[RMDB]
RNA sequence: GGGAACGACUCGAGUAGAGUCGAAAAAAGAACCAGUGAUGGAAUCCAGAGUACCAGAACUGACACAAGAAGAGAUUGAUCAUAUUGCUUGGAUUCAAAGCAUUGCAGAACAAUCAUCAUUCGAACAUCGUAUGAUACCAUUCGUGGUAUCAUACGAAAAAGAAACAACAACAACAAC
Reactivity to 2A3 in 0.01 (KOAc 150mM, MgCl2 10mM, bicine 150mM(pH8.5), 24C), signal-to-noise 4, nucleotides 027 to 126: a000a010g040a030a010c030c000a000g010u010g050a030u040g010g020a080a070u050c090c060a110g030a050g140u090a070c010c010a010g000a030a020c000u030g090a030c020a000c010a200a100g060a050a010g030a010g000a050u010u020g010a030u020c030a020u050a050u140u050g030c010u020u020g030g200a240u300u170c100a040a020a000g000c010a010u000u120g030c090a070g010a050a000c010a010a000u030c020a090u030c020a100u070u060c020g010a030a010c010a080
Reactivity to DMS in 0.01 (KOAc 150mM, MgCl2 10mM, bicine 150mM(pH8.5), 24C), signal-to-noise 5, nucleotides 027 to 126: a080a070g000a140a100c100c010a020g020u010g000a230u000g010g020a090a070u010c040c070a120g030a210g010u010a170c040c030a030g000a200a060c070u010g010a120c110a080c170a080a110g000a070a060g010a090g000a040u000u000g010a070u010c010a100u010a040u010u000g010c000u010u000g000g010a160u010u000c120a030a020a030g010c020a000u000u000g040c230a090g000a030a070c030a010a000u000c020a080u010c070a110u000u000c020g010a070a090c300a100